Description
The data come from the RNA Mapping Database (RMDB), library OK2TST. The record gives the reactivity of an RNA of 177 nucleotides to 2A3 and DMS. 2A3 adducts were read by reverse transcription with SuperScript II with manganese. The 2A3 profile rests on 1,371 reads. The DMS profile rests on 2,576 reads. DMS adducts were read by reverse transcription with MarathonRT.

RNA sequence: GGGAACGACUCGAGUAGAGUCGAAAAUACACUGUGUUCUUAUCGUGAUCACACAGAGCAGCAUGUGGAAUGGCUUUUGAAGUAUCUGGGCCAUACGAGUUUAGAGGUGCAGGAUCUCCUGUGUUGCCACGAGUAACCCAUUCGUGGGUUACUCGUGAAAAGAAACAACAACAACAAC
Reactivity to 2A3 in 0.01 (KOAc 150mM, MgCl2 10mM, bicine 150mM(pH8.5), 24C), signal-to-noise 2, nucleotides 027 to 126: u060a000c050a000c050u000g000u000g030u150u000c060u060u040a100u120c040g040u060g120a050u100c010a020c010a000c010a020g020a000g110c010a000g000c030a080u020g000u050g000g040a050a010u010g020g000c020u000u140u240u140g090a150a040g110u060a140u130c010u000g000g020g010c030c000a000u030a030c030g000a030g070u070u090u080a060g030a000g010g070u140g010c010a000g050g040a040u010c070u070c010c050u070g030u010g060u090u050g040c030
Reactivity to DMS in 0.01 (KOAc 150mM, MgCl2 10mM, bicine 150mM(pH8.5), 24C), signal-to-noise 2, nucleotides 027 to 126: u000a110c130a130c040u000g010u000g020u010u000c020u000u010a070u000c080g000u010g000a100u000c110a070c010a040c030a040g010a140g020c040a020g020c050a110u000g010u000g000g010a090a020u000g010g000c010u000u000u000u000g010a060a200g000u010a080u000c020u010g000g010g010c000c010a040u000a020c040g000a050g020u000u000u000a070g000a060g020g000u000g010c020a010g010g010a100u000c120u000c000c020u000g020u000g020u000u000g000c100